Overview: Chemical mapping of a 207-nucleotide RNA with 2A3. High 2A3 reactivity points to a flexible backbone, as in loops and unpaired stretches.
RNA sequence: GGGAACGACUCGAGUAGAGUCGAAAAUACGCUUUAGCUGCCUAAAAACCAGCUAGCGUGACUUCUACAAGAUUGCUUGUGUCCUGUUAGAAGUCUCAAAAUAGCAAGCUACGGUUACGAAAUUGUCUAGUUUCGUGACAAGAGAUUGAUAGACUCGCUCUAUGUAGGGCUUCGGCCCUACAUAGAGAAAAGAAACAACAACAACAAC
Reactivity to 2A3 in 0.01 (KOAc 150mM, MgCl2 10mM, bicine 150mM(pH8.5), 24C), signal-to-noise 2, nucleotides 027 to 156: u070a000c000g010c000u210u160u090a010g000c000u000g000c000c010u080a080a070a010a010a010c020c000a000g000c010u000a000g000c020g020u000g010a000c000u000u010c000u000a010c000a010a020g000a030u040u140g000c000u010u010g000u010g010u010c000c010u000g000u000u020a020g000a020a000g040u020c020u040c080a130a210a020a040u190a060g010c000a010a000g000c020u000a000c000g010g000u010u000a010c010g000a000a000a040u070u090g000u000c010u000a000g020u000u000u000c010g000u010g010a000c000a010a000g010a000g020a040u070u300g130a030u030a010g010a000c000u010c100g020
Conditions: 150 mM KOAc, 10 mM MgCl2 and 150 mM bicine (pH 8.5), 24 C. The data come from the RNA Mapping Database (RMDB), library ARCHII. Values cover nucleotides 27 to 156. For 2A3, 1,618 sequencing reads were counted.